[RMDB]
RNA sequence: GGGAACGACUCGAGUAGAGUCGAAAAGAUAUGGACGAGGAACUACCGACGCGUUCCGUUGAAAAAAAUCGACAUUCGGAAACGAAUGUCGAUUUUUGGAGGAACACCGUCGGCCUCGUCCUAAGUCCUCGUAUAUUCUGUUCGCAGAAUAUACGAGAAAAGAAACAACAACAACAAC
Reactivity to DMS in 0.01 (KOAc 150mM, MgCl2 10mM, bicine 150mM(pH8.5), 24C), signal-to-noise 5, nucleotides 027 to 126: g000a110u010a300u000g010g010a010c000g010a030g000g000a090a040c060u020a300c010c000g010a010c000g040c250g010u000u000c000c000g000u000u010g020a010a000a000a010a010a010a010u000c000g000a010c000a010u000u000c000g010g000a110a110a190c000g010a010a000u000g000u000c000g000a000u000u000u000u000u000g000g000a100g010g000a020a010c010a040c230c050g010u000c000g000g000c000c000u000c000g020u000c000c010u000a000a070g000u010c040
Reactivity to 2A3 in 0.01 (KOAc 150mM, MgCl2 10mM, bicine 150mM(pH8.5), 24C), signal-to-noise 3, nucleotides 027 to 126: g100a040u110a100u250g000g010a010c010g000a010g020g010a110a070c120u200a100c300c010g000a010c000g000c010g010u010u000c010c000g000u070u050g000a040a040a020a000a000a000a000u010c020g000a000c010a010u010u010c010g040g040a090a090a090c020g000a000a000u000g000u000c000g000a000u000u000u000u000u000g000g010a010g010g000a000a000c020a020c030c060g010u010c010g000g000c020c000u000c000g000u020c000c000u000a000a010g000u030c000
An RNA of 177 nucleotides, treated with DMS and 2A3 and read out base by base. The 2A3 profile rests on 11,668 reads. Source: RMDB library TTRINS, as collected in RNAgym. Conditions: 150 mM KOAc, 10 mM MgCl2 and 150 mM bicine (pH 8.5), 24 C.